[RMDB]
RNA sequence: GGGAACGACUCGAGUAGAGUCGAAAACCAGAUGACGGUCGUGCCAUGAGACCGCAACGAGAGCAUGUCGCAUCGAAUGGACUCGGGGAGUCGGCAGCUUGCCCCACGGAUGAGCGCCUAAUGCCGGAAGAGACGUGCAACUUCGGUUGCACGUCAACUGACACACUUCGUUCGCGAAGUGUGUCAGAAAAGAAACAACAACAACAAC
Reactivity to 2A3 in 0.01 (KOAc 150mM, MgCl2 10mM, bicine 150mM(pH8.5), 24C), signal-to-noise 1, nucleotides 027 to 156: c000c000a020g100a230u170g010a010c000g000g000u070c000g040u070g090c090c050a180u180g050a040g000a030c040c040g000c000a060a090c100g070a020g010a000g090c020a020u040g050u130c040g000c000a160u090c070g050a060a050u070g000g070a080c050u000c000g000g030g000g000a040g110u070c050g030g000c040a080g070c010u100u120g040c000c000c070c090a060c050g060g020a160u090g000a020g030c020g070c020c000u020a130a100u000g010c020c000g150g000a000a000g190a030g000a070c000g020u000g000c000a000a000c010u040u050c160g130g000u000u000g010c030a000c000g020u000c000a000a000
An RNA of 207 nucleotides, treated with 2A3 and read out base by base. It was measured as part of the RMDB library M2RFPK. For 2A3 the reverse transcriptase was SuperScript II with manganese. For 2A3, 525 sequencing reads were counted.